This 177-nucleotide RNA was probed chemically with DMS and 2A3. Source: RMDB libraries RFM100 and RFMREP, as collected in RNAgym.
[RMDB]
RNA sequence: GGGAACGACUCGAGUAGAGUCGAAAAAAAUCUAAUGGCUUAACCAUUAAACUGCUUGGGAAACUGAUAGUCUAGAGUGAGGGAGAGGCAGAUGGAAUUGGUGGUGUAGGGGUAAAAUCCGUAGAUAAUACAGCUAUGUGUUCGCACAUAGCUGUAUAAAAGAAACAACAACAACAAC
Reactivity to DMS in 0.01 (KOAc 150mM, MgCl2 10mM, bicine 150mM(pH8.5), 24C), signal-to-noise 4, nucleotides 027 to 126: a040a060a080u030c040u010a020a040u000g010g000c140u040u030a130a150c010c010a040u010u010a040a070a060c070u000g000c070u000u020g000g000g030a080a080a080c080u020g010a050u010a080g000u010c070u000a060g010a090g010u000g010a080g000g000g000a050g010a090g020g010c050a030g020a060u000g000g010a030a050u020u010g010g020u020g030g020u020g000u000a060g000g000g000g000u030a050a030a040a050u000c030c060g020u010a050g010a070u040a050
Reactivity to 2A3 in 0.01 (KOAc 150mM, MgCl2 10mM, bicine 150mM(pH8.5), 24C), signal-to-noise 2, nucleotides 027 to 126: a000a000a000u090c040u050a020a040u040g000g030c030u070u140a040a030c000c000a010u030u060a070a050a000c020u090g010c000u020u060g030g000g040a010a010a070c030u070g010a110u100a140g070u000c040u060a030g010a040g100u120g020a020g070g020g000a110g020a000g050g000c010a010g020a050u050g010g040a040a070u100u070g050g000u030g040g010u050g070u060a050g010g030g000g000u020a020a020a050a170u040c040c020g030u030a000g040a120u070a080